[RMDB]
RNA sequence: GGGAACGACUCGAGUAGAGUCGAAAACUGACUGCUAUUAUUAAUGUAUUAAAUCAAGUCACUGAUACAUCUUCGAAACCAUUAACAGUGGCGCAUGUAGACAAUCUCAGAUCUCUAAUGGUCGAACUUCAUUCUGUGGUUACCAAAGCGGUCAUGCCAUGCAAAGCGAUUUCGAUCGCUUUGCAUGAAAAGAAACAACAACAACAAC
Reactivity to 2A3 in 0.01 (KOAc 150mM, MgCl2 10mM, bicine 150mM(pH8.5), 24C), signal-to-noise 4, nucleotides 027 to 156: c020u000g020a000c000u010g040c020u070a030u250u050a090u130u160a300a040u140g060u070a090u070u170a080a190a160u170c090a090a010g020u020c020a020c030u000g000a030u000a090c050a080u020c050u130u090c110g080a080a060a070c020c020a060u060u070a040a040c030a030g000u020g020g030c040g020c030a010u080g070u050a040g050a080c030a050a130u070c070u050c080a050g030a120u000c030u020c020u150a080a060u100g040g010u030c010g020a050a050c020u110u100c020a100u110u060c090u070g060u030g000g030u020u020a070c040c050a050a160a000g010c020g000g000u010c010a010u060g040c020
Reactivity to DMS in 0.01 (KOAc 150mM, MgCl2 10mM, bicine 150mM(pH8.5), 24C), signal-to-noise 1, nucleotides 027 to 156: c040u020g030a100c010u000g030c010u000a110u010u000a060u020u000a100a080u070g000u010a050u000u000a080a050a100u060c070a050a130g030u000c030a130c070u020g020a150u000a040c040a040u010c070u000u000c040g000a200a110a050c040c010a020u010u000a060a120c140a120g000u010g000g030c010g020c070a100u000g000u000a110g000a060c020a020a080u000c000u000c000a080g020a090u010c010u000c060u020a080a070u000g000g010u000c030g010a010a070c090u000u000c020a110u000u000c080u000g080u000g030g000u010u010a090c090c050a020a080a140g020c000g020g000u010c010a080u030g000c090

Notes
The record gives the reactivity of an RNA of 207 nucleotides to 2A3 and DMS.